[RMDB]
Structure probing data (2A3) for a 207-nucleotide construct. For 2A3, 671 sequencing reads were counted.

RNA sequence: GGGAACGACUCGAGUAGAGUCGAAAAUGCAAAUAACAAAAAUUCUUACGCAUUAGCUGCUUAAUUUAGCGCAUGCGUUGCUCUUGACCAGUUUACUCGUGACUGGUUUUCGAGUAUCAACUUUAGCGAGUUACGUUUAACUACCUCACCUGAAUAGGAUAUGUUACGCCUUCGGGCGUAACAUAUCAAAAGAAACAACAACAACAAC
Reactivity to 2A3 in 0.01 (KOAc 150mM, MgCl2 10mM, bicine 150mM(pH8.5), 24C), signal-to-noise 2, nucleotides 027 to 156: u090g050c020a000a010a060u230a070a190c080a020a150a030a000a080u280u140c070u110u080a050c000g010c020a010u140u000a070g000c180u230g050c000u150u150a130a110u270u220u300a090g030c010g000c000a000u030g000c020g000u000u100g000c010u040c020u010u030g010a000c000c000a000g010u010u000u050a020c010u000c000g000u000g020a000c000u000g000g000u000u000u040u040c020g000a000g010u000a070u070c020a030a130c040u050u260u190a020g000c020g000a000g010u040u130a050c030g020u000u060u160a000a030c010u020a040c010c000u000c060a050c040c000u010g080a040a030u110a100g040